The data come from the RNA Mapping Database (RMDB), library OK1LIB. Chemical mapping of a 177-nucleotide RNA with 2A3 and DMS. Conditions: 150 mM KOAc, 10 mM MgCl2 and 150 mM bicine (pH 8.5), 24 C. The DMS profile rests on 42,098 reads.
[RMDB]
RNA sequence: GGGAACGACUCGAGUAGAGUCGAAAAUUAAACUACCCAUACAACUAACCGACAUGGGACACGCUCCUUCAUACCGGGAGCGCUGUGCUGGCUGGCUCCACAGCGAUGGUUGGGAUGAAGGUAUAAGUGAUGUCAUAUAGUUCGCUAUAUGACAUCAAAAAGAAACAACAACAACAAC
Reactivity to 2A3 in 0.01 (KOAc 150mM, MgCl2 10mM, bicine 150mM(pH8.5), 24C), signal-to-noise 9, nucleotides 027 to 126: u090u070a090a050a050c080u200a170c020c010c010a030u080a060c040a040a040c010u040a020a020c010c010g040a030c080a280u300g020g000g010a010c010a000c010g000c000u000c000c000u040u100c030a020u010a040c000c010g010g000g000a010g000c010g000c030u010g000u040g100c010u010g040g000c000u010g020g030c040u080c120c070a120c010a050g010c010g030a040u060g010g030u020u020g010g010g020a060u080g050a070a040g010g000u030a040u020a080a040g140
Reactivity to DMS in 0.01 (KOAc 150mM, MgCl2 10mM, bicine 150mM(pH8.5), 24C), signal-to-noise 9, nucleotides 027 to 126: u030u050a050a090a100c160u020a110c000c000c000a110u030a180c120a060a170c030u000a030a050c010c010g000a090c200a050u030g000g000g000a040c030a040c010g000c000u000c000c000u000u020c140a050u000a020c040c020g010g000g000a010g000c000g010c290u010g000u010g000c010u000g000g010c010u000g000g010c100u020c130c140a100c020a020g000c010g000a070u020g010g000u000u000g000g000g010a080u020g010a120a090g000g000u000a020u010a100a110g020